[RMDB]
RNA sequence: GGGAACGACUCGAGUAGAGUCGAAAAGUCGCGGACGGCGAUCUCGUCGCUGGAUAGCGACGCGUCCAGUCCCAGCGGGUCGUCGCGGUCAAGGGCGGGUGGUGUCGGGGUGCUCAUCACUCAAUACCGUCAGAUCGCGGUUCGCCGCGAUCUGACGAAAAGAAACAACAACAACAAC
Reactivity to 2A3 in 0.01 (KOAc 150mM, MgCl2 10mM, bicine 150mM(pH8.5), 24C), signal-to-noise 1, nucleotides 027 to 126: g060u010c010g030c040g160g060a080c000g020g020c030g020a030u040c100u030c030g060u000c000g010c010u010g050g120a180u120a100g000c000g030a030c000g070c020g020u000c040c000a000g190u190c000c000c000a010g170c070g010g000g000u080c020g020u000c000g040c000g090g010u010c090a000a100g080g000g040c090g040g000g040u080g080g050u080g130u190c010g090g020g000g050u110g000c040u040c040a170u130c030a110c000u020c000a020a000u030a130c010
Structure probing data (2A3) for a 177-nucleotide construct. The 2A3 profile rests on 460 reads. The reactions ran in a buffer of 150 mM KOAc, 10 mM MgCl2 and 150 mM bicine (pH 8.5), at 24 C.